[RMDB]
Record summary: Source: RMDB library M2PK90, as collected in RNAgym. Chemical mapping of a 177-nucleotide RNA with 2A3 and DMS. For 2A3, 1,218 sequencing reads were counted. Reactivities are given for positions 27 through 126. For DMS the reverse transcriptase was MarathonRT.
RNA sequence: GGGAACGACUCGAGUAGAGUCGAAAAACUCUGAGCGUAAUCGCGUCUUGACUAGACAAUAGGUGACGUGAGUAUCUAUCCCAUUGUGCAUAGCGAUGGGAUAAUACGCUGAUCUAUAGUCACGGAAGUUUGCUCUACGCUUCGGCGUAGAGCAAACAAAAGAAACAACAACAACAAC
Reactivity to 2A3 in 0.01 (KOAc 150mM, MgCl2 10mM, bicine 150mM(pH8.5), 24C), signal-to-noise 1, nucleotides 027 to 126: a000c060u050c070u120g120a020g010c030g020u100a100a000u040c030g070c030g010u030c050u090u110g030a020c020u000a030g030a090c030a120a130u040a040g000g010u020g000a000c000g020u000g000a030g000u060a030u060c040u010a000u010c010c000c000a000u000u010g070u060g000c110a140u230a220g000c040g010a000u000g000g000g000a000u000a010a000u010a010c000g000c030u030g000a030u000c030u010a020u020a050g000u030c030a020c090g020g060a070a090
Reactivity to DMS in 0.01 (KOAc 150mM, MgCl2 10mM, bicine 150mM(pH8.5), 24C), signal-to-noise 1, nucleotides 027 to 126: a030c030u000c080u000g030a070g010c040g010u020a050a140u000c030g030c030g000u000c020u010u010g010a110c030u000a070g010a080c120a130a060u000a010g000g010u000g000a040c050g020u000g000a050g010u000a000u020c150u000a010u000c000c000c000a000u010u000g020u000g000c300a110u020a130g010c000g000a000u000g010g000g010a000u000a000a010u000a020c010g000c010u000g010a070u000c030u020a040u000a050g030u010c020a100c260g000g000a040a040